RNA sequence: GGGAACGACUCGAGUAGAGUCGAAAAGUGAUUGGGUUGCUACCCUCAUAUGCUAUCGUAACCUUGUGUACAUCAGAAUCGCCCUUGUAUAUUGGCGUAACGUCGAAAACAGUCUUUGAGUAGUAGCCCGGUGCUACGACUUCGGUCGUAGCACCGGAAAAGAAACAACAACAACAAC
Reactivity to 2A3 in 0.01 (KOAc 150mM, MgCl2 10mM, bicine 150mM(pH8.5), 24C), signal-to-noise 1, nucleotides 027 to 126: g300u210g020a040u000u190g080g000g000u010u010g000c000u000a020c120c020c000u050c000a000u130a110u010g100c000u000a000u300c090g020u080a070a070c010c000u060u100g000u000g000u100a060c000a120u090c150a070g010a060a000u100c000g050c010c010c000u090u000g130u100a000u000a000u210u020g000g000c110g050u020a040a110c040g000u000c000g070a020a000a000a170c070a000g050u000c000u000u000u150g050a100g230u070a000g050u000a000g040c000